[RMDB]
Background
Chemical mapping of a 207-nucleotide RNA with DMS and 2A3. The data come from the RNA Mapping Database (RMDB), library RNAMAK. The reactions ran in a buffer of 150 mM KOAc, 10 mM MgCl2 and 150 mM bicine (pH 8.5), at 24 C. DMS adducts were read by reverse transcription with MarathonRT.
RNA sequence: GGGAACGACUCGAGUAGAGUCGAAAAUACUGCUUCGGCAGUACGAACACCGUAGGGAUCGCGAGAGCAUCGAUCUGGUGGGAACCGUUCGAAAGAGCUCAGUACCACCAGGGAGCUCGACCGAUCCCUAAACGGGCAGCGACAGGUUCGCCUGUAACUGAUUGAUAAAAUUCGUUUUAUCAAUCAGAAAAGAAACAACAACAACAAC
Reactivity to DMS in 0.01 (KOAc 150mM, MgCl2 10mM, bicine 150mM(pH8.5), 24C), signal-to-noise 5, nucleotides 027 to 156: u000a020c000u000g000c010u010u010c300g060g010c010a020g010u000a000c020g050a110a130c030a090c010c000g000u000a050g010g000g020a020u000c000g000c000g010a300g000a030g020c010a180u000c160g010a040u010c010u000g010g020u000g010g000g010a160a150c210c300g000u010u000c000g010a160a140a210g010a040g010c020u000c010a130g020u010a260c000c010a020c010c010a010g010g000g000a020g000c000u000c000g000a180c140c020g000a020u000c010c000c010u000a000a020a040c020g000g010g000c070a120g020c050g010a090c030a050g000g010u000u010c140g000c010c000u010g000u000a110a200
Reactivity to 2A3 in 0.01 (KOAc 150mM, MgCl2 10mM, bicine 150mM(pH8.5), 24C), signal-to-noise 4, nucleotides 027 to 156: u050a010c000u010g000c000u020u040c150g180g000c010a000g010u000a030c020g030a060a030c070a080c090c000g020u020a020g000g000g000a000u000c000g010c010g010a020g000a000g050c020a150u300c040g020a050u000c000u000g000g000u000g010g000g000a010a000c000c000g010u010u010c010g040a140a080a080g010a000g000c000u000c000a000g000u000a000c000c000a010c010c000a000g010g000g000a000g000c000u000c000g010a000c000c000g000a000u010c000c000c000u000a000a000a000c000g010g020g000c060a070g090c040g120a030c010a040g120g010u080u100c110g060c070c030u060g020u060a110a090